[RMDB]
RNA sequence: GGGAACGACUCGAGUAGAGUCGAAAACAAUGCAAGAUGGAGCAUCACAGCCGAGUCUUUACCAAUUGAGUAAAGCAUGACUGGAUUUUCAAAUUCUGCGGCUACUUCACGGAUAAUAUGAAUACUACAAAAUCAGCAUGUUCGCAUGCUGAUUUUGAAAAGAAACAACAACAACAAC
Reactivity to DMS in 0.01 (KOAc 150mM, MgCl2 10mM, bicine 150mM(pH8.5), 24C), signal-to-noise 2, nucleotides 027 to 126: c070a070a120u010g000c050a060a030g000a040u000g020g000a050g040c150a050u010c050a180c020a020g030c000c010g000a170g000u010c000u010u000u000a020c030c000a170a170u000u050g000a180g040u000a000a010a010g030c020a100u000g000a020c030u000g020g000a050u010u000u000u020c050a010a080a080u000u000c030u000g000c010g000g000c140u000a020c040u000u000c020a050c100g000g000a110u010a050a100u000a080u000g020a080a070u010a130c090u000a170
Reactivity to 2A3 in 0.01 (KOAc 150mM, MgCl2 10mM, bicine 150mM(pH8.5), 24C), signal-to-noise 1, nucleotides 027 to 126: c000a090a080u070g000c060a020a000g070a190u030g060g020a010g000c100a010u060c030a000c050a060g100c060c010g050a030g030u040c000u010u000u050a020c020c050a280a300u200u280g070a140g030u000a000a020a000g060c010a030u140g020a020c030u020g020g020a010u030u030u030u130c070a120a140a140u020u030c020u030g030c000g050g010c010u010a000c000u090u080c020a000c000g040g040a030u090a210a050u130a110u100g090a110a030u050a180c020u110a070
About this RNA:
An RNA of 177 nucleotides, treated with DMS and 2A3 and read out base by base. It was measured as part of the RMDB library OK2TST. For DMS the reverse transcriptase was MarathonRT. The DMS profile rests on 1,070 reads.